[RMDB]
RNA sequence: GGGAACGACUCGAGUAGAGUCGAAAAUAAAUUUGUUAUCUUCGUAUAGUACUAAAAGUAUGAGUUAUUAAGCCAUCCCAACUUAAUAACCAUGUAAAAUUAGCAAGUGAGUAACAUUUGCUAGUAGCUAACAUCUAUCCUUCGGGAUAGAUGUUAGAAAAGAAACAACAACAACAAC
Reactivity to DMS in 0.01 (KOAc 150mM, MgCl2 10mM, bicine 150mM(pH8.5), 24C), signal-to-noise 3, nucleotides 027 to 126: u020a080a090a120u010u000u000g000u010u010a090u000c030u000u000c140g000u010a090u000a110g010u010a060c030u000a050a070a090a120g000u000a020u010g000a190g020u000u000a000u000u010a000a000g000c030c040a140u000c000c000c000a190a250c000u000u000a000a000u000a010a010c000c030a050u000g000u010a060a060a070a050u000u000a000g010c000a010a000g040u000g010a290g010u020a100a120c010a000u000u010u000g000c000u000a010g020u000a090g000
Reactivity to 2A3 in 0.01 (KOAc 150mM, MgCl2 10mM, bicine 150mM(pH8.5), 24C), signal-to-noise 2, nucleotides 027 to 126: u010a000a040a010u120u140u110g040u030u040a220u130c070u130u010c080g030u150a080u050a170g070u050a120c050u100a080a120a060a080g070u040a050u060g040a040g090u020u020a010u020u000a000a000g000c010c000a060u010c000c000c000a000a000c000u000u000a000a010u000a010a000c020c000a010u030g020u040a050a140a100a060u040u000a020g000c000a000a000g020u010g030a090g130u110a240a050c020a000u000u010u000g000c030u000a010g040u060a010g030
Structure probing data (DMS and 2A3) for a 177-nucleotide construct. For DMS the reverse transcriptase was MarathonRT. Values cover nucleotides 27 to 126.